[RMDB]
RNA sequence: GGGAACGACUCGAGUAGAGUCGAAAAACGGGCACGUUCGCGUGCCCGUAAUGAACGCUGCAACGCGGAGAGAUCUCGCGAGAGCGCGAAUGCACAAAGAAACAUUUCCAGUUUUCGAACUGGAAAACAGCAUAUACUUCUUCGGAAGUAUAUGCUGAAAAGAAACAACAACAACAAC
Reactivity to 2A3 in 0.01 (KOAc 150mM, MgCl2 10mM, bicine 150mM(pH8.5), 24C), signal-to-noise 2, nucleotides 027 to 126: a000c020g020g000g000c010a000c010g040u090u090c240g020c010g070u030g030c020c000c000g000u010a010a010u020g000a000a020c050g000c050u180g010c020a070a140c000g000c020g070g000a030g000a000g010a060u060c100u160c120g000c020g010a090g030a020g060c010g000c020g000a070a020u190g040c100a030c050a080a120a050g130a090a150a010c030a040u010u000u010c010c000a020g000u040u000u010u130c150g060a020a000c000u000g000g000a000a000a010a010
Reactivity to DMS in 0.01 (KOAc 150mM, MgCl2 10mM, bicine 150mM(pH8.5), 24C), signal-to-noise 3, nucleotides 027 to 126: a030c000g000g000g030c000a010c010g030u000u010c170g010c000g050u030g010c000c000c000g020u000a000a020u010g000a130a110c010g020c010u010g000c120a130a110c060g000c010g010g000a040g000a210g000a160u010c010u040c020g020c010g020a120g010a090g010c010g000c020g000a150a040u000g000c130a070c160a090a060a080g020a060a090a120c200a120u000u000u000c000c000a000g010u000u000u000u010c180g000a010a000c000u000g000g010a000a000a000a150
This 177-nucleotide RNA was probed chemically with 2A3 and DMS.
The 2A3 profile rests on 3,040 reads.
For DMS the reverse transcriptase was MarathonRT.
The RNA was probed in 150 mM KOAc, 10 mM MgCl2 and 150 mM bicine (pH 8.5) at 24 C.